[RMDB]
RNA sequence: GGGAACGACUCGAGUAGAGUCGAAAAUGUCUGGCUUUAACCACAACUCCUUUACGAUUGGCUAUUAAAAUGUCAAGUUAAGACAAGUGUGAAUUUUCUCAUUAGUAAUGCUGUGGCGCGAAACACAUAUUUUUUUAUCUAAAGCCUUCGAGUAACCACAGGCUGUAAAAUUCGUUUUACAGCCUGUAAAAGAAACAACAACAACAAC
Reactivity to 2A3 in 0.01 (KOAc 150mM, MgCl2 10mM, bicine 150mM(pH8.5), 24C), signal-to-noise 3, nucleotides 027 to 156: u120g020u040c040u050g020g020c020u040u080u040a080a040c020c010a010c020a060a030c030u070c010c020u040u050u070a060c060g100a160u060u040g000g000c000u020a010u160u280a210a080a050a050u080g000u010c000a000a070g020u030u050a040a010g020a030c040a060a060g020u000g020u030g080a090a110u080u030u100u010c040u020c020a030u040u090a070g070u120a080a050u040g050c030u000g020u020g030g020c040g000c030g090a020a180a000c050a000c020a040u090a140u130u070u050u020u040u060u110a080u030c050u030a070a060a050g010c010c000u010u040c040g040a050g010u030a030a020c020c000
Reactivity to DMS in 0.01 (KOAc 150mM, MgCl2 10mM, bicine 150mM(pH8.5), 24C), signal-to-noise 2, nucleotides 027 to 156: u010g000u020c030u000g040g020c030u000u000u000a110a070c030c030a020c050a030a100c020u010c040c030u000u000u000a090c100g010a100u000u000g010g000c030u000a300u020u010a000a060a040a190u000g040u020c030a040a130g040u020u000a050a100g030a090c050a040a070g010u000g030u000g020a150a160u000u000u000u000c030u000c010a110u010u000a070g010u000a060a030u030g020c030u000g040u000g000g020c020g050c070g000a080a080a070c050a050c040a060u000a000u000u000u000u000u000u000u000a090u010c030u000a070a040a220g030c030c060u000u000c040g020a120g000u000a070a090c060c060